[RMDB]
RNA sequence: GGGAACGACUCGAGUAGAGUCGAAAAGGUCGUCUUUUCGAAGACGACCACUGUCGUUCCCAAAACUUUUCGAAAGAUGUCGAAAGACAUGCUGAAACAGAAUUGGUGUGUGUUUCGACACACACAAUGAUUUCGGAAAAUUCGUUUUCCGAAAUCAAAAAGAAACAACAACAACAAC
Reactivity to DMS in 0.01 (KOAc 150mM, MgCl2 10mM, bicine 150mM(pH8.5), 24C), signal-to-noise 4, nucleotides 027 to 126: g000g010u000c010g000u000c000u000u010u000u010c200g010a010a010g010a000c000g000a000c010c000a010c070u000g010u010c000g010u000u000c000c000c000a080a020a090a170c100u000u000u000u000c040g000a140a120a070g010a050u000g000u000c000g000a070a070a150g000a010c000a020u000g000c040u000g000a060a060a080c300a130g010a080a090u000u000g010g020u010g030u000g000u000g000u010u000u020c150g000a050c000a000c000a020c010a020c060a050a070
Reactivity to 2A3 in 0.01 (KOAc 150mM, MgCl2 10mM, bicine 150mM(pH8.5), 24C), signal-to-noise 2, nucleotides 027 to 126: g030g000u000c010g000u020c000u030u050u030u100c200g130a000a000g000a000c000g000a000c010c000a010c000u010g000u010c010g000u010u000c000c000c000a010a000a010a000c030u090u040u030u030c060g090a210a080a050g120a080u020g000u000c000g040a090a000a050g010a010c010a000u050g110c030u060g040a040a070a030c090a080g210a190a120u130u130g060g020u000g000u020g000u000g020u030u040u060c120g030a010c000a000c000a000c000a010c010a000a040

Overview:
This 177-nucleotide RNA was probed chemically with DMS and 2A3. Source: RMDB library M2PK50, as collected in RNAgym. For DMS, 3,448 sequencing reads were counted. For 2A3, 3,024 sequencing reads were counted. The reactions ran in a buffer of 150 mM KOAc, 10 mM MgCl2 and 150 mM bicine (pH 8.5), at 24 C.